[RMDB]
RNA sequence: GGGAACGACUCGAGUAGAGUCGAAAAUUCUGGCUGGAUUACGCCGACGGCAUUGAGCCCUACUUCUCGGUUCCGGCGACCGGAAUCGAAGACCUCAACGAGCCCAUCCGCGAGUGGCCGUUCAACGGGAUCAAUUAGAGUUCGCUCUAAUUGAUCCAAAAGAAACAACAACAACAAC
Reactivity to 2A3 in 0.01 (KOAc 150mM, MgCl2 10mM, bicine 150mM(pH8.5), 24C), signal-to-noise 7, nucleotides 027 to 126: u040u010c020u030g040g010c020u030g050g060a180u130u130a080c060g000c020c010g020a050c030g030g000c040a050u030u130g030a030g020c010c030c010u070a120c040u080u060c030u010c050g020g000u010u010c010c000g020g020c080g100a130c170c020g000g010a010a000u010c000g010a030a030g030a030c000c020u060c040a040a030c050g060a020g030c020c010c020a080u030c030c010g020c010g020a030g040u060g020g020c010c010g020u070u080c060a090a050c100g060
Reactivity to DMS in 0.01 (KOAc 150mM, MgCl2 10mM, bicine 150mM(pH8.5), 24C), signal-to-noise 5, nucleotides 027 to 126: u000u010c020u000g000g040c020u020g010g030a100u020u010a040c100g010c020c080g000a080c260g020g020c020a150u000u010g010a110g000c070c050c070u010a090c080u010u030c040u000c030g000g000u000u000c000c010g010g000c220g000a110c060c000g020g010a010a010u000c020g000a020a030g000a130c190c000u010c010a050a120c180g010a140g020c040c000c080a160u010c050c080g020c090g010a130g000u010g010g020c040c010g000u010u010c060a030a190c280g010
Structure probing data (2A3 and DMS) for a 177-nucleotide construct. 2A3 adducts were read by reverse transcription with SuperScript II with manganese. The data come from the RNA Mapping Database (RMDB), library OK1LIB. For 2A3, 8,888 sequencing reads were counted. The DMS profile rests on 8,171 reads.